[RMDB]
RNA sequence: GGGAACGACUCGAGUAGAGUCGAAAACAUAUGGUUCGCCAUAUGACAUAGGGGUCAACGGUGGGGGAGCGACGUACUGAAGCCUCCACGGUACUAUCGCAUCGAUCCGUAACAUCCGUUGACGGAGGCACCCAUAGAGACAGCGUUCGCGCUGUAACAUAAAGAUAGGUUUCGACCUAUCUUUAUGAAAAGAAACAACAACAACAAC
Reactivity to DMS in 0.01 (KOAc 150mM, MgCl2 10mM, bicine 150mM(pH8.5), 24C), signal-to-noise 4, nucleotides 027 to 156: c030a040u000a020u010g000g020u010u010c300g030c000c000a020u000a000u000g030a110c100a140u010a090g030g010g030g010u000c000a020a030c030g030g030u000g010g020g030g040g010a080g020c020g020a030c190g020u000a040c000u010g000a040a150g030c010c010u000c010c010a300c040g010g000u010a010c030u000a130u000c010g020c010a300u000c110g010a090u010c040c050g000u000a040a080c040a110u010c020c030g020u000u000g010a050c040g010g010a060g070g050c000a100c020c000c040a090u000a140g030a210g020a070c000a050g010c000g030u000u000c300g010c060g040c000u000g000u000a020a140
Reactivity to 2A3 in 0.01 (KOAc 150mM, MgCl2 10mM, bicine 150mM(pH8.5), 24C), signal-to-noise 7, nucleotides 027 to 156: c000a000u000a000u000g030g050u060u080c260g090c060c000a000u000a000u020g020a000c030a040u250a060g200g000g110g000u000c000a000a000c010g000g020u040g030g110g020g010g000a100g030c000g000a010c000g010u000a000c000u010g020a100a010g000c010c000u000c010c000a010c000g000g000u000a010c000u030a030u020c010g000c020a060u160c170g250a180u090c040c030g110u100a040a020c010a060u120c020c010g000u000u000g000a000c000g000g000a000g000g000c010a030c000c000c000a050u110a060g150a010g020a030c000a010g020c010g050u120u150c230g010c000g010c130u000g020u020a020a040